Chemical mapping of a 177-nucleotide RNA with 2A3 and DMS. Conditions: 150 mM KOAc, 10 mM MgCl2 and 150 mM bicine (pH 8.5), 24 C. For 2A3 the reverse transcriptase was SuperScript II with manganese. For DMS the reverse transcriptase was MarathonRT.
[RMDB]
RNA sequence: GGGAACGACUCGAGUAGAGUCGAAAAGAUAUGGAUCCCAGUUACGAGCCUACCCAUCGGAAACGAUGGGAGGCGAUGAGUAAUGGGAUCCUAAGUCAAACCAGGUUCCUCUUCGGAGGAACCUGGACAAUUGGAUCCUGUUCGCAGGAUCCAAUUGAAAAGAAACAACAACAACAAC
Reactivity to 2A3 in 0.01 (KOAc 150mM, MgCl2 10mM, bicine 150mM(pH8.5), 24C), signal-to-noise 2, nucleotides 027 to 126: g010a010u000a000u050g000g020a010u020c000c010c000a000g020u010u020a020c020g060a050g050c030c000u250a300c230c010c010a000u020c000g000g000a010a000a000c000g000a010u010g020g000g000a000g020g030c000g000a020u040g020a020g020u010a030a050u000g000g030g000a000u000c000c000u000a010a000g000u010c000a050a030a140c010c010a010g010g000u010u010c010c010u040c040u090u130c300g220g000a000g000g020a000a000c000c000u000g000g000a060
Reactivity to DMS in 0.01 (KOAc 150mM, MgCl2 10mM, bicine 150mM(pH8.5), 24C), signal-to-noise 2, nucleotides 027 to 126: g000a010u000a010u010g010g010a020u000c000c000c000a030g000u000u000a000c010g000a060g030c000c010u000a170c010c010c000a010u000c000g010g010a000a010a020c000g010a000u000g000g010g050a000g000g020c000g010a020u010g000a090g010u000a010a030u000g010g020g000a010u000c000c000u000a000a060g000u000c000a150a160a270c000c010a010g000g010u000u000c000c000u000c000u000u000c230g030g020a030g020g010a000a010c000c000u000g000g010a060